[RMDB]
RNA sequence: GGGAACGACUCGAGUAGAGUCGAAAAUUGCGCGCAGGCCAUUUAUGCCUGCGACCAUACCCUGCUUGUCGAACGGAGGGCUUGAAACAUGACGAUACGACUGGAUGGAAAGACCGCGCUUGUGACAGUAAUCAUGGUGAUUCGUCACCAUGAUUACAAAAGAAACAACAACAACAAC
Reactivity to DMS in 0.01 (KOAc 150mM, MgCl2 10mM, bicine 150mM(pH8.5), 24C), signal-to-noise 6, nucleotides 027 to 126: u000u010g000c280g020c020g010c010a010g000g020c020c280a130u010u000u010a080u020g020c010c000u010g010c000g010a020c030c040a040u000a140c030c010c010u010g020c080u010u000g020u000c050g010a070a090c080g020g000a120g010g000g010c030u000u000g010a100a100a080c090a060u000g000a100c060g010a120u000a070c090g010a080c070u000g000g020a080u000g010g010a060a040a100g000a060c050c030g020c080g000c070u010u000g010u000g000a070c170a100
Reactivity to 2A3 in 0.01 (KOAc 150mM, MgCl2 10mM, bicine 150mM(pH8.5), 24C), signal-to-noise 4, nucleotides 027 to 126: u040u070g000c070g000c000g000c010a010g010g000c050c070a130u100u200u130a220u280g000c000c000u000g000c000g010a000c000c000a020u060a060c000c000c000u020g040c030u040u080g060u060c020g040a040a040c040g010g040a020g020g000g000c000u010u050g060a060a060a020c040a050u080g060a050c030g070a050u040a130c030g030a060c080u050g030g040a060u040g010g060a110a070a020g020a020c010c010g000c000g000c050u080u070g030u060g060a030c040a050
Source: RMDB library OK2TST, as collected in RNAgym. The record gives the reactivity of an RNA of 177 nucleotides to DMS and 2A3. The DMS profile rests on 6,815 reads. The RNA was probed in 150 mM KOAc, 10 mM MgCl2 and 150 mM bicine (pH 8.5) at 24 C. Values cover nucleotides 27 to 126. For 2A3, 5,856 sequencing reads were counted. For DMS the reverse transcriptase was MarathonRT.